This 207-nucleotide RNA was probed chemically with 2A3. The 2A3 profile rests on 489 reads. Values cover nucleotides 27 to 156. The RNA was probed in 150 mM KOAc, 10 mM MgCl2 and 150 mM bicine (pH 8.5) at 24 C.
[RMDB]
RNA sequence: GGGAACGACUCGAGUAGAGUCGAAAAAUGAAUAAGUAGCCAACAGCACACGAAAAUGUGUGUAAUCCACUUGUAAGCAGAGAAAUGCAAAUUAAAACAGUAAAGUGUCAUUUUCACUUCCUGGAUUGGCAAAGGGUUUUAUGUAUUUUACUGACAAGGCCUGAGUCGACUUCGGUCGACUCAGGCCAAAAGAAACAACAACAACAAC
Reactivity to 2A3 in 0.01 (KOAc 150mM, MgCl2 10mM, bicine 150mM(pH8.5), 24C), signal-to-noise 1, nucleotides 027 to 156: a000u110g060a000a020u120a080a040g060u060a000g010c010c000a020a020c010a100g030c000a000c000a000c010g140a180a010a130a140u170g000u000g000u010g010u010a000a040u010c040c050a040c030u000u050g060u130a000a050g060c030a000g130a020g040a100a000a000u020g000c010a000a020a090u140u120a110a000a000a000c010a010g050u090a030a040a000g010u020g030u070c020a050u020u010u080u060c010a000c030u090u010c000c000u030g080g040a050u030u050g000g020c030a020a030a030g030g020g000u000u010u010u010a070u020g030u000a020u010u050u040u020a030c040u030g050a040c000a140a040